[RMDB]
RNA sequence: GGGAACGACUCGAGUAGAGUCGAAAAUUCUCAGCACUCAUCAAGAAGUAGGCUUAGGCCUAUUGCUUGGUGGUGAAAGUAGAGGGAAGGUAGCACUUCGACGCCUCUAAGUACGCUGUGGGAGUAGAAAACUGGACAUCGUUCGCGAUGUCCAGAACCAUAUUCCCUUGUUCGCAAGGGAAUAUGGAAAAGAAACAACAACAACAAC
Reactivity to DMS in 0.01 (KOAc 150mM, MgCl2 10mM, bicine 150mM(pH8.5), 24C), signal-to-noise 2, nucleotides 027 to 156: u000u010c000u010c000a150g000c020a040c000u010c000a000u010c010a010a070g010a040a020g040u010a010g030g010c010u000u000a230g050g020c000c030u010a000u000u000g000c020u010u000g000g070u000g000g000u000g010a040a060a080g030u000a020g000a070g020g030g020a090a070g020g020u030a150g020c130a190c050u010u000c040g020a140c060g010c050c000u000c050u010a060a150g000u020a060c070g020c020u010g010u010g030g010g010a170g000u000a140g000a050a070a080a210c000u000g010g000a030c010a010u000c010g040u000u000c300g030c000g050a030u000g000u000c000c000a010g000a010a020
Reactivity to 2A3 in 0.01 (KOAc 150mM, MgCl2 10mM, bicine 150mM(pH8.5), 24C), signal-to-noise 2, nucleotides 027 to 156: u060u000c000u010c010a030g000c010a020c050u260c010a010u020c000a010a000g000a010a000g030u000a000g030g000c000u050u160a090g100g040c010c000u010a010u010u020g010c000u010u000g000g000u000g000g000u010g030a090a050a020g070u090a020g020a010g030g020g000a040a000g050g010u110a020g040c020a040c070u010u010c010g090a060c060g070c020c000u030c010u030a040a010g050u030a020c070g000c080u040g030u080g060g040g090a090g040u160a040g120a090a090a020a060c000u020g000g000a000c000a000u000c000g030u050u040c130g000c010g130a010u020g010u010c000c000a000g000a000a000
Conditions: 150 mM KOAc, 10 mM MgCl2 and 150 mM bicine (pH 8.5), 24 C. Structure probing data (DMS and 2A3) for a 207-nucleotide construct. For 2A3, 1,591 sequencing reads were counted. Values cover nucleotides 27 to 156.